[RMDB]
RNA sequence: GGGAACGACUCGAGUAGAGUCGAAAAGAACGACCGUACCGACUGAGCGAUCCGGUACCGCUGUCUGGGUGUGACCUCGCUCCACCGAUCCGUCGUCUCACGUAAGGCAGUGUCGACUGCGACGUCGCGGCGAUCGACCUUUCGAGGUCGAUCGCCGAAAAGAAACAACAACAACAAC
Reactivity to 2A3 in 0.01 (KOAc 150mM, MgCl2 10mM, bicine 150mM(pH8.5), 24C), signal-to-noise 1, nucleotides 027 to 126: g090a030a090c070g000a020c030c030g000u070a010c000c010g170a060c070u130g120a110g070c010g060a020u010c000c010g090g000u030a070c010c040g050c070u030g000u090c010u040g170g010g000u040g040u110g010a030c020c020u000c000g000c000u060c030c020a030c020c010g030a020u010c020c040g030u010c000g000u000c030u020c000a060c020g040u070a000a090g060g000c000a030g000u000g070u080c050g090a090c020u070g000c090g020a060c030g000u030c000g040
An RNA of 177 nucleotides, treated with 2A3 and read out base by base. For 2A3, 570 sequencing reads were counted. Source: RMDB library OK1LIB, as collected in RNAgym.